[RMDB]
RNA sequence: GGGAACGACUCGAGUAGAGUCGAAAAGAAGACCAAUUGUUUUUAACAAUUGUAUACGCAUUACGACAAGUUGUGAGCAGACUCUCCUAGGGAGUGUCUUUUCCUCACAACCAUAGGCGUACUAUAAUGCGGACACAUAGGGUGUCCUGGGAACGGAGGGGUAUGAUGUAUUCGUGCGUCGUACUCCAAAAGAAACAACAACAACAAC
Reactivity to 2A3 in 0.01 (KOAc 150mM, MgCl2 10mM, bicine 150mM(pH8.5), 24C), signal-to-noise 5, nucleotides 027 to 156: g060a050a000g040a020c040c000a020a020u020u020g060u040u090u070u120u240a060a000c010a010a000u010u020g030u050a050u020a040c020g010c040a020u080u090a050c080g050a040c090a140a020g010u000u010g000u000g010a010g000c020a010g010a010c010u010c000u010c060c010u120a110g150g040g000a000g010u010g000u010c000u070u070u070u060c000c000u000c000a000c000a000a000c010c000a010u050a050g100g000c020g010u020a010c030u040a020u060a090a060u130g050c020g020g010a010c010a000c000a060u300a170g200g080g000u010g010u000c000c010u020g030g000g070a080a050c050g030g050a050
Reactivity to DMS in 0.01 (KOAc 150mM, MgCl2 10mM, bicine 150mM(pH8.5), 24C), signal-to-noise 3, nucleotides 027 to 156: g020a140a060g020a160c090c000a040a060u000u000g000u000u000u010u000u000a040a110c020a050a040u000u000g020u000a110u000a040c030g010c000a080u000u000a040c040g020a120c070a120a070g020u000u000g020u010g020a040g070c110a070g000a030c000u000c000u010c010c010u000a170g050g060g020a060g020u000g010u000c000u020u010u000u010c120c000u020c020a020c010a010a030c010c030a010u000a140g020g030c050g010u000a050c180u000a080u000a030a030u000g000c040g020g000a050c030a010c020a170u010a080g000g020g010u000g030u000c010c010u000g000g000g000a080a140c070g000g000a300